RNA sequence: GGGAACGACUCGAGUAGAGUCGAAAACAGCACGUGUAAACGCACGCAAAAGCCCUUUAUGGCAAUGUGUCUCGGCUGGUUAUGGUACACCAAUCUGACGUAUGGUUAUCAGUAAUAUUCCCGCACGGAAUACAGGACAGUUCGCUGUCCUGUAUUCAAAAGAAACAACAACAACAAC
Reactivity to 2A3 in 0.01 (KOAc 150mM, MgCl2 10mM, bicine 150mM(pH8.5), 24C), signal-to-noise 4, nucleotides 027 to 126: c010a020g040c050a030c180g010u010g010u030a030a060a000c050g060c120a030c000g000c000a040a040a040a070g000c000c000c000u040u180u060a260u160g000g030c010a050a050u030g010u000g010u020c010u000c010g020g000c000u000g000g030u030u060a040u030g000g000u020a010c030a000c130c010a060a110u070c100u160g150a070c110g130u210a070u070g000g010u000u010a010u000c010a020g050u050a040a040u030a090u100u030c010c020c000g010c020a040c080g110
Reactivity to DMS in 0.01 (KOAc 150mM, MgCl2 10mM, bicine 150mM(pH8.5), 24C), signal-to-noise 5, nucleotides 027 to 126: c040a030g000c020a090c030g030u010g020u010a040a070a050c120g000c140a040c040g000c070a050a050a160a190g010c010c010c220u000u010u000a090u020g020g010c030a010a300u020g010u000g020u000c010u000c040g010g020c010u000g000g020u000u000a020u000g000g000u000a020c240a020c010c010a020a300u020c060u010g030a090c170g000u020a140u000g000g000u000u000a020u000c010a030g000u000a030a020u010a200u000u010c000c000c010g030c300a080c260g000